[RMDB]
RNA sequence: GGGAACGACUCGAGUAGAGUCGAAAAGGCAGGAAUAGAAUGGGCCGAAUCUAGGGUCUCACUGCAGGCCAGAUGCUAUUUUUGUUUGGCGCACGGCCUGGUGAAUGAUCCGGCUGUGUUCUCCGCGCAAUAUUUUAAAAUUCGUUUUAAAAUAUUGAAAAGAAACAACAACAACAAC
Reactivity to DMS in 0.01 (KOAc 150mM, MgCl2 10mM, bicine 150mM(pH8.5), 24C), signal-to-noise 8, nucleotides 027 to 126: g010g010c020a070g000g010a110a070u030a040g010a070a050u010g010g000g010c010c010g010a080a050u020c060u010a110g010g010g010u030c050u000c010a020c020u010g020c040a020g030g010c000c000a080g010a170u040g000c010u010a010u010u020u030u040u040g010u020u020u020g010g000c030g020c070a100c090g000g010c000c000u000g010g010u000g010a040a010u020g000a010u000c010c000g000g000c020u010g010u010g010u000u000c010u000c020c030g010c130g000
Reactivity to 2A3 in 0.01 (KOAc 150mM, MgCl2 10mM, bicine 150mM(pH8.5), 24C), signal-to-noise 9, nucleotides 027 to 126: g080g000c090a060g040g070a090a090u130a150g050a060a020u100g040g030g000c000c000g030a030a030u070c070u110a050g080g010g050u010c010u010c030a040c030u210g040c030a010g000g000c000c000a020g050a100u080g000c010u020a110u060u080u030u090u110g290u080u110u150g050g000c020g000c010a010c020g000g000c000c000u000g000g000u010g020a030a000u100g010a000u010c000c000g000g000c000u060g020u010g000u200u000c040u000c010c010g000c000g000